[RMDB]
RNA sequence: GGGAACGACUCGAGUAGAGUCGAAAAUCGGACUGGUUCGCCAGUCCGAAAAUAACGGUCCGUGCUUGCAGCUGAUUGUAAAUGCAAACUGGCCUUACAUCAAAAGCCCGGACUUCGGUCCGGGCAAGAUACAGUUGAGGUUCGCCUCAACUGUAUCAAAAGAAACAACAACAACAAC
Reactivity to DMS in 0.01 (KOAc 150mM, MgCl2 10mM, bicine 150mM(pH8.5), 24C), signal-to-noise 2, nucleotides 027 to 126: u010c000g000g010a010c000u000g010g000u000u020c200g040c010c000a010g020u000c000c000g000a000a010a070a100u020a050a120c150g020g020u000c000c090g010u010g010c090u010u000g000c010a020g020c170u020g000a130u000u010g010u000a040a060a120u010g010c010a010a020a010c020u010g000g000c000c020u000u010a050c160a090u010c140a100a150a170a150g000c000c020c000g010g000a010c000u000u010c130g010g010u000c000c000g000g020g000c000a000a000
Reactivity to 2A3 in 0.01 (KOAc 150mM, MgCl2 10mM, bicine 150mM(pH8.5), 24C), signal-to-noise 2, nucleotides 027 to 126: u010c000g000g000a000c010u000g000g060u030u040c130g050c050c000a010g010u000c000c000g000a000a000a010a000u050a040a030c050g010g000u020c020c020g050u050g090c060u000u040g000c010a030g030c060u120g140a300u220u130g140u200a090a170a090u050g020c000a020a000a070c000u000g000g000c000c010u020u100a080c050a140u240c080a080a170a100a030g000c000c000c000g020g000a000c020u000u030c170g030g000u000c000c000g000g020g000c000a010a000
This 177-nucleotide RNA was probed chemically with DMS and 2A3. For DMS the reverse transcriptase was MarathonRT. The data come from the RNA Mapping Database (RMDB), library M2PK50.